[RMDB]
RNA sequence: GGGAACGACUCGAGUAGAGUCGAAAAAGUCGGUAAGCCAAUUGGUGCGGACGGCUUCAAGUGGCUGAAGGUCCACGGUGCAAACUGUGCGGGUGUCGAUAAAGUCACCUUCGAGGAGCGCAUCAAGGACAGACAUUGGCUUCGGCCAAUGUCUGUCAAAAGAAACAACAACAACAAC
Reactivity to 2A3 in 0.01 (KOAc 150mM, MgCl2 10mM, bicine 150mM(pH8.5), 24C), signal-to-noise 1, nucleotides 027 to 126: a050g050u050c040g000g060u060a010a000g000c000c000a050a100u090u040g190g010u090g050c000g000g000a160c010g040g000c000u020u010c020a030a000g160u060g010g020c000u060g000a270a020g050g100u000c000c000a000c040g000g020u090g000c040a000a000a100c050u120g200u230g060c010g000g020g000u020g070u010c040g150a300u190a300a100a030g010u030c000a000c000c000u000u020c020g050a070g090g000a100g020c040g000c070a000u020c030a110a000g110
Reactivity to DMS in 0.01 (KOAc 150mM, MgCl2 10mM, bicine 150mM(pH8.5), 24C), signal-to-noise 1, nucleotides 027 to 126: a050g000u000c000g000g000u000a120a050g000c010c000a170a170u000u000g110g070u050g010c030g020g000a250c190g000g000c010u000u010c070a140a040g000u000g000g000c000u000g090a060a200g000g000u060c000c000a000c210g000g010u000g000c080a000a300a130c020u000g000u180g000c000g000g110g000u000g000u000c070g000a130u000a000a180a040g000u020c040a000c000c000u000u000c040g000a230g020g000a050g010c060g000c040a000u010c000a300a280g000